[RMDB]
RNA sequence: GGGAACGACUCGAGUAGAGUCGAAAAAGCAGAACGGAGCGAUUAUGGAAGCUGAGUAACGCACUUCGAGGUACGACUUAGCGUGCCAACGCCAAAAGCAUCUCCCCUUGUUGCCAUCAUUGGCGCCUGACUAGGACUCAUUCGUGAGUCCUAGUCAAAAAGAAACAACAACAACAAC
Reactivity to 2A3 in 0.01 (KOAc 150mM, MgCl2 10mM, bicine 150mM(pH8.5), 24C), signal-to-noise 3, nucleotides 027 to 126: a000g020c020a030g010a080a020c050g020g040a090g120c030g060a090u090u140a110u300g050g010a070a010g000c010u010g010a000g030u010a140a050c020g000c000a010c040u110u150c190g150a120g140g000u020a020c020g010a000c070u030u040a000g040c010g060u080g040c010c020a020a030c020g030c010c000a010a040a000a030g010c000a060u030c020u050c060c010c000c010u050u120g120u110u150g000c000c010a050u190c050a140u140u160g000g010c000g020c010c040
Reactivity to DMS in 0.01 (KOAc 150mM, MgCl2 10mM, bicine 150mM(pH8.5), 24C), signal-to-noise 3, nucleotides 027 to 126: a110g030c010a040g010a070a130c130g020g010a070g010c000g020a090u000u010a150u000g010g020a110a190g020c010u010g010a070g010u010a060a100c040g000c030a020c020u000u020c240g010a120g020g000u000a020c030g020a100c040u000u000a030g000c000g020u010g000c000c030a070a120c030g000c020c020a010a050a110a120g010c040a100u000c110u000c010c000c010c190u010u000g010u000u010g010c020c020a040u000c180a210u000u000g000g010c030g010c140c180